[RMDB]
RNA sequence: GGGAACGACUCGAGUAGAGUCGAAAACUCUUGUUAGGUGAAAGUUGAUGGUCGCCGUUUCAGUCCAUGCCUUUGAAAACAGUUCUAUGUAGUAGGGAGUCGAGAACCUAUGAGAGUUAGAACUUGCUAUGCCUUGGACUCUUCGGAGUCCAAGGAAACAUACUUCUAAGUUCGCUUAGAAGUAUGUAAAAGAAACAACAACAACAAC
Reactivity to 2A3 in 0.01 (KOAc 150mM, MgCl2 10mM, bicine 150mM(pH8.5), 24C), signal-to-noise 4, nucleotides 027 to 156: c020u040c040u070u080g110u080u120a080g030g030u060g060a140a050a100g030u090u120g030a060u080g030g010u060c020g000c060c030g040u020u050u040c030a030g030u000c020c000a030u070g040c020c020u110u100u220g120a090a090a010a020c050a030g000u030u000c020u030a030u090g050u050a060g010u020a000g010g000g050a040g050u070c050g030a040g020a210a040c010c000u000a020u040g040a080g010a020g100u030u030a010g010a020a010c010u020u060g040c030u060a090u200g040c000c000u000u010g000g000a010c000u000c000u020u070c230g080g010a000g010u000c000c000a010a010g010g000a000a010
Reactivity to DMS in 0.01 (KOAc 150mM, MgCl2 10mM, bicine 150mM(pH8.5), 24C), signal-to-noise 5, nucleotides 027 to 156: c020u000c000u000u000g020u000u000a070g010g020u000g010a080a070a110g010u010u000g020a110u000g020g020u000c020g030c030c020g010u000u000u000c020a150g010u010c060c040a080u000g010c020c020u000u000u000g000a090a050a040a050c030a050g010u000u000c010u000a050u010g010u000a300g010u000a050g020g010g010a120g020u010c110g010a250g000a110a140c010c000u000a020u000g010a260g010a180g000u000u010a060g000a020a040c020u000u000g040c010u000a090u000g010c010c010u000u000g020g010a020c000u000c000u000u000c260g040g010a040g010u000c000c000a000a010g000g000a000a010
About this RNA:
An RNA of 207 nucleotides, treated with 2A3 and DMS and read out base by base. For DMS, 16,928 sequencing reads were counted. It was measured as part of the RMDB library M2RFPK.